[RMDB]
RNA sequence: GGGAACGACUCGAGUAGAGUCGAAAAGUGAGGCAUGCGAAAGGAUGGGACGAUGGCAUCCGUACGGAAACCAUCCUUGCGAUUAUUCUGACAAGAAUUCCAUCCGAAACGUACGGAAUAAUAGUCCAUCCGAAACGUACGUUAUCUGUAUGGUCCACUCACCGUUUGGUUUCGACCAAACGGUGAGAAAAGAAACAACAACAACAAC
Reactivity to DMS in 0.01 (KOAc 150mM, MgCl2 10mM, bicine 150mM(pH8.5), 24C), signal-to-noise 1, nucleotides 027 to 156: g000u000g030a070g010g010c010a150u010g000c070g090a090a210a050g040g000a010u000g000g000g000a140c010g010a020u000g060g060c110a300u000c020c000g050u000a090c070g080g000a100a300a100c040c110a070u010c000c000u020u000g000c020g020a090u010u000a070u000u000c060u000g040a050c120a130a110g020a140a110u000u000c020c070a110u000c030c030g000a020a010a130c000g000u060a000c000g020g020a150a190u000a210a030u000a020g000u000c060c000a220u010c020c020g020a030a040a060c020g010u000a040c060g000u000u000a020u000c060u000g000u000a050u000g030g000u000c030c080a220
Reactivity to 2A3 in 0.01 (KOAc 150mM, MgCl2 10mM, bicine 150mM(pH8.5), 24C), signal-to-noise 2, nucleotides 027 to 156: g070u090g060a030g000g070c010a010u110g030c030g070a090a020a020g040g000a020u020g000g000g060a000c060g050a070u010g050g000c020a070u080c030c020g000u070a020c160g040g000a100a030a010c050c060a030u020c000c000u090u030g000c030g000a010u000u090a070u110u210c050u040g110a070c080a120a010g030a050a040u120u030c040c000a000u050c060c000g070a040a000a000c010g010u000a000c000g020g060a030a000u140a070a000u010a040g020u000c020c020a050u000c050c040g010a050a040a030c010g000u010a000c000g000u020u040a170u190c040u090g110u120a050u050g050g000u010c060c000a010

Structure probing data (DMS and 2A3) for a 207-nucleotide construct. High DMS reactivity at an A or C suggests that its Watson-Crick edge is free. The 2A3 profile rests on 940 reads. For DMS, 1,258 sequencing reads were counted. DMS adducts were read by reverse transcription with MarathonRT. For 2A3 the reverse transcriptase was SuperScript II with manganese. The reactions ran in a buffer of 150 mM KOAc, 10 mM MgCl2 and 150 mM bicine (pH 8.5), at 24 C.